RNA sequence: GGGAACGACUCGAGUAGAGUCGAAAAGAUAUGGAAAUGAAAGGGAGUUGGGUGGUCGGAAACGACCAUUAACUUUGAUCUUUACAUUUCCUAAGUCAAAACUGGCUCUAGUUCGCUAGAGCCAGAACCAUAUAUUGAUCUUCGGAUCAAUAUAUGGAAAAGAAACAACAACAACAAC
Reactivity to DMS in 0.01 (KOAc 150mM, MgCl2 10mM, bicine 150mM(pH8.5), 24C), signal-to-noise 5, nucleotides 027 to 126: g010a030u000a300u010g000g000a010a020a010u000g000a050a030a020g010g010g000a020g020u000u000g020g030g020u000g000g010u000c010g010g000a060a080a190c000g010a010c000c000a010u000u000a030a010c010u000u010u020g000a070u010c000u000u000u000a150c010a010u000u000u000c000c000u000a060a130g010u000c020a090a060a140a190c000u000g000g000c000u000c000u000a000g010u000u010c270g010c010u000a010g000a020g010c000c000a000g000a020a130
Reactivity to 2A3 in 0.01 (KOAc 150mM, MgCl2 10mM, bicine 150mM(pH8.5), 24C), signal-to-noise 6, nucleotides 027 to 126: g030a010u070a020u130g010g000a000a010a000u020g020a020a010a010g040g060g040a100g040u050u080g180g110g030u020g010g000u010c010g000g000a080a050a020c010g000a000c000c000a010u020u020a010a010c000u240u170u250g100a080u070c010u030u030u060a240c010a000u000u000u020c000c000u010a090a020g040u030c040a010a010a160a250c010u010g000g000c000u000c000u000a030g030u090u070c300g000c210u000a000g000a010g000c010c000a000g000a000a000